Annotation
Source: RMDB library RFM100, as collected in RNAgym. An RNA of 177 nucleotides, treated with 2A3 and read out base by base. For 2A3 the reverse transcriptase was SuperScript II with manganese. The 2A3 profile rests on 1,265 reads.
[RMDB]
RNA sequence: GGGAACGACUCGAGUAGAGUCGAAAAACUGGAAGUGAGAAUUGGAGGAAAACAAACUGAUUGCUGGUUGAUGCUUGCAACAGUGUGGCAAACAAUUAAUAUUCAGAUUGUUUUUCUCCAAUAUCUCCCUUGGCUUUUUGUUCGCAAAAAGCCAAGGAAAAGAAACAACAACAACAAC
Reactivity to 2A3 in 0.01 (KOAc 150mM, MgCl2 10mM, bicine 150mM(pH8.5), 24C), signal-to-noise 3, nucleotides 027 to 126: a000c040u140g000g130a030a040g080u050g100a000g000a000a010u000u000g000g000a000g020g000a000a000a000a000c000a010a020a010c000u010g010a040u030u050g030c080u000g050g000u000u030g000a070u060g030c070u160u150g030c040a130a160c070a250g180u110g010u030g170g010c010a090a130a110c010a090a000u020u040a070a020u020a010u140u030c000a000g020a070u010u000g000u000u000u000u000u000c000u000c000c000a000a000u000a000u010c000u020c000